[RMDB]
RNA sequence: GGGAACGACUCGAGUAGAGUCGAAAAUGUUUGCAAUUCGUUGCAAACAAACUACCGAGAACGUUGCUCGCUAUAAACAGCGAACCCUUGGAAACAAGGGAACUAUGGAACGCUUCGGCGUUCCAAACUAUUUAACUCGAUUCGUCGAGUUAAAUAGAAAAGAAACAACAACAACAAC
Reactivity to DMS in 0.01 (KOAc 150mM, MgCl2 10mM, bicine 150mM(pH8.5), 24C), signal-to-noise 5, nucleotides 027 to 126: u000g000u000u000u000g000c010a010a020u000u020c210g020u000u000g010c000a010a010a010c000a030a070a130c030u010a030c010c010g000a020g000a080a060c030g010u000u000g000c030u000c010g020c020u000a090u010a090a080a150c270a030g000c010g010a090a180c000c000c010u000u000g000g000a160a100a170c000a000a000g000g010g010a040a040c200u010a110u010g010g010a010a010c000g020c000u000u020c150g030g010c000g010u000u000c000c000a020a030a100
Reactivity to 2A3 in 0.01 (KOAc 150mM, MgCl2 10mM, bicine 150mM(pH8.5), 24C), signal-to-noise 4, nucleotides 027 to 126: u040g000u000u000u010g020c010a000a020u060u040c210g050u080u000g000c000a010a010a010c010a010a040a010c010u010a010c010c020g000a010g020a130a080c010g020u000u110g140c030u020c030g000c000u040a060u090a270a200a040c090a020g010c020g030a130a120c010c000c010u010u000g010g000a060a040a020c000a000a000g000g020g020a000a000c020u030a070u070g000g000a010a000c000g010c010u050u060c210g090g000c000g000u000u000c000c000a000a000a000